[RMDB]
RNA sequence: GGGAACGACUCGAGUAGAGUCGAAAAGGAAUUCAAGAAGGGUUGCUUUAUGUACUACCCGAAUGUCCAAUUGAAACUAGUACAUAUAGUGUAAGAUAUUGGAAGGUGUUACAGUGUGUGUCUGCGAUCUCAAGUUUACCUCUUUCCGACAGCGAGAAAUAUCCAGUACUUUCGAGUACUGGAUAUUAAAAGAAACAACAACAACAAC
Reactivity to 2A3 in 0.01 (KOAc 150mM, MgCl2 10mM, bicine 150mM(pH8.5), 24C), signal-to-noise 7, nucleotides 027 to 156: g040g010a030a020u100u070c060a040a060g090a060a060g110g020g010u050u070g030c020u080u120u060a100u160g030u100a030c010u090a010c020c100c020g030a030a030u110g030u000c030c040a050a080u050u120g050a050a020a030c050u020a010g020u050a030c020a030u070a020u040a050g050u020g020u030a040a040g030a120u070a050u120u070g040g020a040a040g030g020u030g020u040u030a030c020a040g000u020g000u000g000u000g020u050c020u040g020c030g030a090u010c040u010c070a050a030g000u020u050u070a050c010c010u030c030u050u040u050c040c020g060a050c050a010g060c030g080a020g060a060
Reactivity to DMS in 0.01 (KOAc 150mM, MgCl2 10mM, bicine 150mM(pH8.5), 24C), signal-to-noise 6, nucleotides 027 to 156: g020g010a100a080u000u000c060a080a120g010a120a140g000g020g020u000u000g010c040u000u000u000a040u020g010u000a030c020u000a050c020c010c020g000a080a090u000g010u010c070c080a070a130u000u010g000a120a080a040c030u000a020g010u000a060c050a050u000a060u000a060g000u000g010u000a080a120g010a150u000a060u000u000g010g000a080a110g010g020u000g010u000u000a080c050a090g030u000g010u000g020u000g010u000c020u000g010c030g010a080u000c030u010c040a040a110g000u000u000u000a070c040c020u000c030u000u000u000c020c010g030a090c050a100g010c040g010a130g010a080